This 177-nucleotide RNA was probed chemically with 2A3 and DMS.
As a SHAPE reagent, 2A3 marks flexible, mostly unpaired nucleotides at the ribose 2'-OH.
For 2A3 the reverse transcriptase was SuperScript II with manganese.
It was measured as part of the RMDB library OK1LIB.

[RMDB]
RNA sequence: GGGAACGACUCGAGUAGAGUCGAAAAAUUGGAGAGAAGGACUUGACCAUGCUAUGCCAGUGUUGAAGUGUUCUGUACACCCACCUUAUCACUCCCAGAACCAUCGCGAGCUGUCGAGUCGACGAUGCUCGGGCACAAUCUUCGGAUUGUGCCCGAGAAAAGAAACAACAACAACAAC
Reactivity to 2A3 in 0.01 (KOAc 150mM, MgCl2 10mM, bicine 150mM(pH8.5), 24C), signal-to-noise 2, nucleotides 027 to 126: a000u050u130g010g000a050g030a030g020a050a150g180g000a080c010u000u010g000a000c030c030a190u090g000c040u070a040u250g000c000c070a010g030u040g070u300u140g070a140a050g000u020g090u300u000c020u030g300u170a020c000a080c010c000c000a090c000c000u180u170a070u070c080a000c070u000c000c000c000a000g080a000a020c000c000a020u030c030g000c000g000a000g110c000u000g020u120c000g130a000g000u000c000g080a120c020g010a000u140g040
Reactivity to DMS in 0.01 (KOAc 150mM, MgCl2 10mM, bicine 150mM(pH8.5), 24C), signal-to-noise 1, nucleotides 027 to 126: a180u000u040g000g000a080g000a080g000a120a140g000g000a150c000u000u040g000a080c100c160a090u000g060c090u000a020u050g010c000c020a100g010u000g020u000u000g000a100a090g020u020g000u000u000c050u000g100u020a090c090a040c000c020c050a020c050c010u030u050a060u000c050a030c090u030c000c010c010a040g000a030a040c020c050a000u000c040g000c010g000a020g000c010u050g000u000c020g000a150g020u010c010g000a160c040g020a120u000g000